Annotation
The record gives the reactivity of an RNA of 177 nucleotides to DMS and 2A3. The RNA was probed in 150 mM KOAc, 10 mM MgCl2 and 150 mM bicine (pH 8.5) at 24 C. It was measured as part of the RMDB library TTRDES.
RNA sequence: GGGAACGACUCGAGUAGAGUCGAAAAGAUAUGGAAGAAGAACUCAUCGAUCGUAUGGGUCGGAAACGACCCUACGGGAGAGUUCCUCUUCCUAAGUCAAAAUCUUUCUGAGUUCGCUCAGAAAGAAGUUACACAGACUGUUCGCAGUCUGUGUAACAAAAGAAACAACAACAACAAC
Reactivity to DMS in 0.01 (KOAc 150mM, MgCl2 10mM, bicine 150mM(pH8.5), 24C), signal-to-noise 2, nucleotides 027 to 126: g010a020u000a070u030g000g010a030a000g000a030a010g010a020a010c000u010c000a300u000c230g010a090u000c030g000u000a010u030g000g020g010u000c000g020g000a000a030a040c010g010a020c000c000c000u010a010c000g000g000g020a040g030a050g010u000u000c000c020u010c000u000u000c000c000u000a000a110g020u020c000a120a110a110a110u000c000u000u000u000c000u000g010a020g000u010u010c300g030c000u010c000a000g010a010a020a000g000a020a070
Reactivity to 2A3 in 0.01 (KOAc 150mM, MgCl2 10mM, bicine 150mM(pH8.5), 24C), signal-to-noise 2, nucleotides 027 to 126: g020a020u030a000u060g000g000a000a010g020a000a010g000a020a000c010u020c030a150u300c200g070a080u030c040g040u010a130u300g030g000g000u000c020g000g000a020a000a010c010g020a000c000c000c030u000a000c000g020g040g040a210g000a020g000u000u000c010c000u000c000u000u000c000c000u000a000a010g000u020c030a030a030a130a300u010c000u000u010u000c000u010g000a010g010u090u200c300g170c140u000c000a010g000a000a000a000g000a010a010